Structure probing data (2A3) for a 207-nucleotide construct. The reactions ran in a buffer of 150 mM KOAc, 10 mM MgCl2 and 150 mM bicine (pH 8.5), at 24 C. Source: RMDB library VIROID, as collected in RNAgym. Reactivities are given for positions 27 through 156.

RNA sequence: GGGAACGACUCGAGUAGAGUCGAAAAACUCCGGCUGGUGUGAAGAAGGAGCCGUUCCACGCAGGACGCGAACAAGAAGAAGCCGAAGCAACUUCACGCCGCCGCGCACGAACUGGCGCUCGAUCUCCGCCUCGCUCGAGUAGGUUUCCCCGGGCAUGAGUCCAUAGUAGUUCGCUACUAUGGACUCAAAAGAAACAACAACAACAAC
Reactivity to 2A3 in 0.01 (KOAc 150mM, MgCl2 10mM, bicine 150mM(pH8.5), 24C), signal-to-noise 1, nucleotides 027 to 156: a000c050u060c050c000g000g030c060u270g020g000u010g030u040g020a010a060g060a060a090g090g060a080g040c070c000g020u090u060c000c030a140c020g060c120a130g040g100a030c000g090c050g060a190a040c130a140a060g100a090a020g060a040a000g160c060c050g070a050a000g060c030a040a100c000u000u000c000a000c000g010c000c020g000c010c020g000c010g030c000a180c120g110a300a050c060u170g030g040c060g010c070u050c060g140a190u070c070u000c040c010g030c020c000u000c000g000c000u000c000g000a000g000u020a100g190g000u000u030u050c050c000c000c000g000g000g090c150a110u040